[RMDB]
RNA sequence: GGGAACGACUCGAGUAGAGUCGAAAAUAAGGGCGAUUCGGAUUUGACCACAUCAGAUGGUGGAAAAUUAUUGAAUGCGAACAUUAGUCAAUCGGUAAAGGUCAGUGACAAUAACUUAAAAGAUUUGUGUUGGUACGGUGUUCGCACCGUACCAACAAAAAGAAACAACAACAACAAC
Reactivity to 2A3 in 0.01 (KOAc 150mM, MgCl2 10mM, bicine 150mM(pH8.5), 24C), signal-to-noise 1, nucleotides 027 to 126: u000a000a000g040g000g000c010g010a000u000u000c040g000g070a000u000u000u130g120a180c000c000a030c080a060u160c080a000g240a200u300g000g000u000g000g000a000a000a000a040u040u100a040u000u300g000a120a000u030g000c000g060a000a000c000a000u080u080a000g000u080c020a180a180u040c000g220g000u260a040a040a040g030g020u040c000a010g000u000g100a100c120a020a020u030a000a040c000u080u120a120a290a000a000g240a300u120u120u020g300